RNA sequence: GGGAACGACUCGAGUAGAGUCGAAAAUUAAGAACUGUCUUAAUCAGUUUAGGUUGCUAUACAUUGCCAUAGACCAUGAGGCUUAAACAUCAAACAUUUAUUUCUCACAGUUGUGGAGGCUAUAACUUCAAAAUCAGAGCACCAGCAUGGUGGAGUAGAUAGGAAAAUGAUUCGUCAUUUUCCUAUCAAAAGAAACAACAACAACAAC
Reactivity to 2A3 in 0.01 (KOAc 150mM, MgCl2 10mM, bicine 150mM(pH8.5), 24C), signal-to-noise 4, nucleotides 027 to 156: u080u030a080a000g050a060a030c010u040g090u050c070u160u280a140a110u130c000a020g020u010u010u050a080g030g030u070u050g030c010u050a050u040a210c020a080u130u120g010c030c010a070u070a060g050a040c030c010a070u080g020a010g010g000c000u020u090a030a060a000c050a060u130c110a060a060a070c000a000u020u140u120a080u030u170u040c030u020c010a050c010a030g040u080u070g040u120g040g030a030g040g000c030u080a050u060a280a050c030u090u070c070a090a060a040a130u070c050a030g040a000g100c010a000c050c000a000g090c050a080u100g030g010u050g020g020a040g020u140a010
Reactivity to DMS in 0.01 (KOAc 150mM, MgCl2 10mM, bicine 150mM(pH8.5), 24C), signal-to-noise 3, nucleotides 027 to 156: u000u020a070a150g010a030a090c060u000g020u000c100u000u000a090a160u010c050a040g010u000u000u000a110g020g000u000u000g010c010u010a160u010a050c090a100u000u000g010c010c020a100u000a120g020a050c010c020a100u000g000a110g010g020c030u010u000a050a040a060c040a120u010c150a130a120a180c120a070u000u000u000a040u010u000u000c030u000c010a050c050a050g020u000u000g050u000g000g010a050g000g030c040u000a060u010a080a050c040u000u000c040a070a070a090a090u000c040a090g000a110g020c070a050c040c030a050g020c080a090u000g020g020u000g000g010a080g010u000a090